[RMDB]
An RNA of 177 nucleotides, treated with DMS and 2A3 and read out base by base.
The reactions ran in a buffer of 150 mM KOAc, 10 mM MgCl2 and 150 mM bicine (pH 8.5), at 24 C.
For DMS, 15,493 sequencing reads were counted.
The 2A3 profile rests on 7,556 reads.

RNA sequence: GGGAACGACUCGAGUAGAGUCGAAAAUUCAGAUUCCGACAGUGACUCAGAUUCCGAUAGUGACUCGGAUUCAGCGAGUGAUUCAGAUUCAGAUAGCGAUUCAGAAUCAGAUAGUGACUCAGACUCAAGAUAAAUAGCGUUUCGACGCUAUUUAUCUAAAAGAAACAACAACAACAAC
Reactivity to DMS in 0.01 (KOAc 150mM, MgCl2 10mM, bicine 150mM(pH8.5), 24C), signal-to-noise 7, nucleotides 027 to 126: u020u010c070a110g000a110u010u000c000c020g010a080c300a170g010u010g010a090c070u000c020a100g000a050u010u000c020c060g000a060u020a130g000u030g010a080c130u010c010g000g010a100u020u030c120a120g030c050g000a030g010u000g010a070u000u010c010a080g000a020u000u000c010a100g000a060u020a150g010c060g000a090u010u000c020a050g010a030a010u000c010a050g010a040u020a060g000u000g000a070c030u000c050a090g010a120c040u000c060a150
Reactivity to 2A3 in 0.01 (KOAc 150mM, MgCl2 10mM, bicine 150mM(pH8.5), 24C), signal-to-noise 8, nucleotides 027 to 126: u130u060c030a030g050a110u060u010c010c020g020a030c040a100g060u050g100a030c030u010c040a020g030a130u090u020c020c010g040a040u060a090g230u140g140a070c070u020c010g040g000a020u090u020c030a030g090c020g090a020g040u050g020a010u030u040c020a010g030a050u010u020c010a020g130a220u130a110g120c100g070a040u060u050c040a040g040a020a020u000c000a010g070a090u070a050g120u060g050a020c020u020c050a020g050a150c000u060c110a080